[RMDB]
RNA sequence: GGGAACGACUCGAGUAGAGUCGAAAACGGUAAAAACGCCUCGUGCUGACCAGGUUUGGUCGGGGGUCAACCCGCAGCCAAUCCUGCUCCUACCUGGGAGCCGGUGCUGUUCACAGACUAGAUGGCGACGGGUCGUGCACAUUGCAGCGGCUCAAGAGAAUCUGGUUAAGUUCGCUUAACCAGAUUCAAAAGAAACAACAACAACAAC
Reactivity to 2A3 in 0.01 (KOAc 150mM, MgCl2 10mM, bicine 150mM(pH8.5), 24C), signal-to-noise 3, nucleotides 027 to 156: c020g010g020u100a120a070a040a000a030c080g020c000c010u050c090g070u080g020c020u080g010a020c000c000a030g050g010u030u080u060g000g000u090c080g000g000g010g000g030u110c060a120a190c030c020c000g020c070a020g020c010c010a010a040u030c000c010u000g010c010u010c000c000u050a300c000c110u190g070g010g010a000g020c000c000g030g030u020g000c010u010g010u080u030c050a040c030a080g080a050c040u070a030g020a140u170g030g010c020g010a030c030g040g020g010u000c000g030u020g020c040a020c010a060u010u300g020c050a070g030c000g010g000c000u020c050a070a030g070a000
Reactivity to DMS in 0.01 (KOAc 150mM, MgCl2 10mM, bicine 150mM(pH8.5), 24C), signal-to-noise 2, nucleotides 027 to 156: c020g020g020u000a050a090a100a060a120c050g020c020c000u000c050g040u000g040c010u000g000a040c040c000a070g000g000u010u000u000g030g000u010c010g000g010g020g000g000u000c190a120a090c010c000c250g050c050a060g020c010c060a050a170u000c000c000u000g030c000u000c000c020u000a130c170c140u010g010g010g000a030g050c000c060g000g030u000g000c020u020g000u000u000c010a140c050a160g040a150c040u000a090g000a090u000g000g040c030g000a050c040g000g010g000u010c010g000u000g000c000a130c050a210u010u010g010c000a070g040c030g010g000c010u000c030a110a130g010a300